Annotation
This 177-nucleotide RNA was probed chemically with DMS and 2A3. Reactivities are given for positions 27 through 126. The reactions ran in a buffer of 150 mM KOAc, 10 mM MgCl2 and 150 mM bicine (pH 8.5), at 24 C.

[RMDB]
RNA sequence: GGGAACGACUCGAGUAGAGUCGAAAAAGUGUAUAACUGCCAAUCUGUCAACGUGUUUAGCGACAGGCUAAACUGCAACCGAAACUGCUUCGGUAUAGCAGCUAAUAGGGAAAUAAUUAAUUUCCACCCUGAUAUAUAGGUUCGCCUAUAUAUCAGGAAAAGAAACAACAACAACAAC
Reactivity to DMS in 0.01 (KOAc 150mM, MgCl2 10mM, bicine 150mM(pH8.5), 24C), signal-to-noise 8, nucleotides 027 to 126: a040g010u000g010u040a090u040a100a020c030u000g010c010c030a100a110u030c020u000g000u010c020a100a180c180g020u020g000u010u020u010a070g010c140g010a050c040a030g000g020c060u000a020a090a170c010u010g000c040a070a040c000c000g020a010a020a210c250u050g000c210u010u010c000g000g020u000a040u020a100g000c010a010g010c120u010a050a090u030a090g010g010g010a000a010a030u010a080a150u030u030a060a140u010u000u000c000c010a140c250
Reactivity to 2A3 in 0.01 (KOAc 150mM, MgCl2 10mM, bicine 150mM(pH8.5), 24C), signal-to-noise 9, nucleotides 027 to 126: a000g110u130g050u050a160u070a250a100c050u110g040c010c000a030a080u060c030u050g060u060c040a090a080c150g100u100g070u130u130u140a050g030c060g090a120c060a050g080g000c020u070a070a050a020c000u020g000c010a020a020c000c000g040a050a050a070c170u230g040c110u070u010c010g010g010u060a050u090a120g000c000a000g000c020u080a110a100u110a250g050g010g100a020a020a010u160a040a070u230u140a040a070u020u030u000c010c010a040c030